The data come from the RNA Mapping Database (RMDB), library OK2TST. This 177-nucleotide RNA was probed chemically with DMS.

[RMDB]
RNA sequence: GGGAACGACUCGAGUAGAGUCGAAAAGUCGCAUCAUGCCCUCCGUAACGACAGGUAUCAGCGAUACAAGCCUUGUUGGUUAAUGUAAGUCAGUACCGGUUCCGGCAAUAAAUCCUCACAUGAUUCACUAAGGGCUAGCUUUCGAGCUAGCCCUUAGAAAAGAAACAACAACAACAAC
Reactivity to DMS in 0.01 (KOAc 150mM, MgCl2 10mM, bicine 150mM(pH8.5), 24C), signal-to-noise 1, nucleotides 027 to 126: g010u000c100g030c050a080u000c120a040u000g000c000c030c020u000c050c010g020u000a060a070c070g020a100c070a030g030g010u000a030u000c090a170g010c080g000a080u010a000c070a030a150g010c000c010u030u000g050u000u000g040g000u000u000a080a100u000g000u000a030a180g020u020c060a090g010u000a010c000c010g010g010u000u000c100c000g010g020c200a070a080u030a030a070a090u000c010c000u020c080a080c180a030u000g000a090u000u000c110a100

Description: DMS adducts were read by reverse transcription with MarathonRT. The RNA was probed in 150 mM KOAc, 10 mM MgCl2 and 150 mM bicine (pH 8.5) at 24 C.